[RMDB]
RNA sequence: GGGAACGACUCGAGUAGAGUCGAAAACAAAGGAUAUGAACAGACACUUCUCAGAAGGAGACAUUUAUGCAGCCAAAAGACACAUGAAAAAAUGCUCAUCAUCACUGGCCAUCAGAGAAAUGCAAAUCAAAACCACAAUGAGAUACCAUCUCACACACGCAUAGUAAUAUUUCGAUAUUACUAUGCGAAAAGAAACAACAACAACAAC
Reactivity to 2A3 in 0.01 (KOAc 150mM, MgCl2 10mM, bicine 150mM(pH8.5), 24C), signal-to-noise 8, nucleotides 027 to 156: c050a020a050a030g050g000a060u090a050u230g060a090a020c030a050g090a030c020a010c070u090u030c050u030c040a090g040a140a020g080g020a030g010a020c010a020u060u120u100a090u120g030c040a010g010c020c020a020a130a030a030g060a010c040a000c030a090u150g080a070a050a020a000a010a050u100g020c020u020c040a060u020c010a020u030c010a050c060u030g040g000c040c000a050u080c030a030g030a010g040a080a060a020u090g010c030a030a020a080u070c020a010a030a060a080c040c020a050c040a100a080u080g000a010g000a040u060a140c020c040a060u010c010u010c010a030c000a010c000a010
Reactivity to DMS in 0.01 (KOAc 150mM, MgCl2 10mM, bicine 150mM(pH8.5), 24C), signal-to-noise 3, nucleotides 027 to 156: c030a050a110a140g000g000a160u010a110u000g020a070a130c070a150g040a110c050a070c070u000u000c020u020c050a130g030a100a110g040g010a080g020a120c070a080u000u000u000a030u010g040c060a120g000c030c010a040a060a100a150g010a100c070a060c040a020u020g010a000a030a070a060a050a090u000g030c020u020c050a060u000c040a080u000c040a090c060u000g060g000c060c000a050u000c060a070g000a090g010a030a060a030u010g000c020a030a050a060u000c060a020a020a110a070c020c030a060c060a030a100u000g000a060g030a040u010a080c060c050a160u000c020u000c020a050c030a070c080a160